[RMDB]
Chemical mapping of a 177-nucleotide RNA with 2A3 and DMS. For DMS the reverse transcriptase was MarathonRT. The data come from the RNA Mapping Database (RMDB), library OK2TRN.

RNA sequence: GGGAACGACUCGAGUAGAGUCGAAAAAAUUAAUCCGCACAAGCCCCACUGCAUCGAUCAUCGAAUAAAACAGAUCAGCAUAUUCGCGCAACAGAACUGACAAUUUCCGAUAACCUUUAGACAGCCGAUAUCAUUGAUACUUCGGUAUCAAUGAUAUAAAAGAAACAACAACAACAAC
Reactivity to 2A3 in 0.01 (KOAc 150mM, MgCl2 10mM, bicine 150mM(pH8.5), 24C), signal-to-noise 2, nucleotides 027 to 126: a010a000u200u040a070a030u070c050c010g030c030a060c040a060a020g010c030c000c040c010a040c000u030g010c000a030u040c020g020a030u040c010a030u020c050g100a120a060u110a150a120a020a030c060a010g050a090u090c020a010g030c010a020u060a110u100u150c050g000c010g000c020a000a040c020a040g030a050a040c020u030g060a010c000a050a170u020u030u030c000c000g020a010u050a080a070c010c000u050u060u050a050g030a100c040a010g050c040c020g040
Reactivity to DMS in 0.01 (KOAc 150mM, MgCl2 10mM, bicine 150mM(pH8.5), 24C), signal-to-noise 5, nucleotides 027 to 126: a070a060u000u010a080a080u010c050c040g020c080a050c090a070a090g010c040c010c030c050a100c080u000g010c040a050u010c090g010a070u010c050a060u000c080g000a110a070u020a040a050a100a090c130a070g000a050u010c040a060g020c050a080u000a100u000u010c060g040c120g010c050a040a030c060a030g010a050a040c030u010g000a070c080a060a070u000u000u000c010c020g000a090u010a040a070c050c030u010u000u000a080g010a070c070a050g000c040c080g000